[RMDB]
This 207-nucleotide RNA was probed chemically with 2A3.
For 2A3 the reverse transcriptase was SuperScript II with manganese.
The data come from the RNA Mapping Database (RMDB), library OK3TST.
Conditions: 150 mM KOAc, 10 mM MgCl2 and 150 mM bicine (pH 8.5), 24 C.
RNA sequence: GGGAACGACUCGAGUAGAGUCGAAAAUCAAAUCCAAAGGAUAGUGCAUUCGCCUGUUUGUAUGGGUUGCAUUUGCAUUUCCAUUUGUUCAAGUUCACGGUCAGUAGAGCAAAAUACACAGAACUAGAAUAACAUGUUCGCCUGACGGCAGCAAAAAGCUAUCCCAGUGAUUCGUCACUGGGAUAGCAAAAGAAACAACAACAACAAC
Reactivity to 2A3 in 0.01 (KOAc 150mM, MgCl2 10mM, bicine 150mM(pH8.5), 24C), signal-to-noise 2, nucleotides 027 to 156: u110c050a040a080a110u020c040c020a070a000a000g050g020a030u090a100g110u050g000c010a000u000u060c080g000c010c020u020g180u100u200u130g300u130a140u170g020g000g050u070u300g040c030a050u040u030u050g010c040a020u000u000u000c030c010a020u070u040u120g030u000u000c060a130a080g020u000u000c030a040c090g060g020u030c090a050g030u130a010g060a080g000c060a150a020a070a010u200a030c060a030c010a040g140a120a000c040u080a050g040a120a040u100a090a020c030a020u010g000u010u030c030g000c020c000u020g040a050c020g000g000c020a030g040c050a120a060a000a090a000